[RMDB]
RNA sequence: GGGAACGACUCGAGUAGAGUCGAAAAACAGGCUGUCUAGGCAGGACAGUAACAAGAGCUCAUUUCUCAGAACUUACACUGACCUUAAUGGACCUGGAUCUAGAGAUGAAGCACAACGUAUCCUCAGGCCUCCCUACAUAUUCGUAUGUAGGGAGGCAAAAGAAACAACAACAACAAC
Reactivity to 2A3 in 0.01 (KOAc 150mM, MgCl2 10mM, bicine 150mM(pH8.5), 24C), signal-to-noise 2, nucleotides 027 to 126: a020c030a000g060g030c000u000g010u000c030u060a050g190g000c040a010g070g040a010c010a000g020u050a020a050c070a050a050g070a020g030c010u010c040a040u000u050u020c020u020c020a030g000a070a060c020u080u070a050c100a050c120u140g130a230c020c040u070u160a190a070u260g040g020a070c000c020u030g040g030a080u060c010u020a020g000a000g000a030u030g050a100a030g030c010a010c010a170a000c030g050u080a040u070c000c010u040c020a030g110
Reactivity to DMS in 0.01 (KOAc 150mM, MgCl2 10mM, bicine 150mM(pH8.5), 24C), signal-to-noise 2, nucleotides 027 to 126: a100c100a110g000g000c030u010g000u000c010u000a090g060g000c130a100g000g010a010c030a010g000u000a080a130c130a140a110g020a050g030c040u010c000a060u000u000u000c000u010c110a070g010a090a070c050u010u000a130c120a050c110u000g000a100c010c010u010u000a080a020u000g000g040a090c100c080u010g000g000a090u010c020u000a010g000a010g000a030u000g000a080a050g070c000a050c130a040a080c100g000u020a120u000c030c000u040c250a120g000